[RMDB]
RNA sequence: GGGAACGACUCGAGUAGAGUCGAAAAAACAGAUUGAAGCAAACUAUUGCCAUUCUGGGAGAGAUGGACUGGUUGAACUUUCAAAACAAGAUUAUCAGUUAGUAGUUCUAGAUGUGAUGAUGCCAGGAAUUACCAUAGGUUUCGACCUAUGGUAAUUAAAAGAAACAACAACAACAAC
Reactivity to DMS in 0.01 (KOAc 150mM, MgCl2 10mM, bicine 150mM(pH8.5), 24C), signal-to-noise 9, nucleotides 027 to 126: a070a060c060a030g000a070u010u010g010a140a100g010c050a040a040a130c180u030a080u010u010g010c020c010a060u010u000c020u010g000g010g010a070g010a100g000a050u010g000g000a060c040u000g010g010u000u010g020a040a070c060u000u010u010c100a070a040a070a070c200a060a060g000a100u020u020a040u010c070a050g010u010u010a080g010u010a050g000u000u000c030u010a050g010a050u010g010u010g000a050u010g010a050u010g010c050c030a050g000g010
Reactivity to 2A3 in 0.01 (KOAc 150mM, MgCl2 10mM, bicine 150mM(pH8.5), 24C), signal-to-noise 9, nucleotides 027 to 126: a000a000c100a020g080a060u100u100g060a120a010g030c050a030a040a110c090u160a180u180u130g000c000c010a020u060u020c020u020g020g050g010a080g010a000g010a040u060g030g030a020c020u020g030g020u040u070g020a040a040c030u040u110u120c110a070a090a060a070c050a050a060g060a130u110u110a050u160c030a010g040u010u090a030g030u040a010g010u040u030c020u030a050g010a150u070g050u020g070a070u030g010a010u050g050c020c010a030g020g080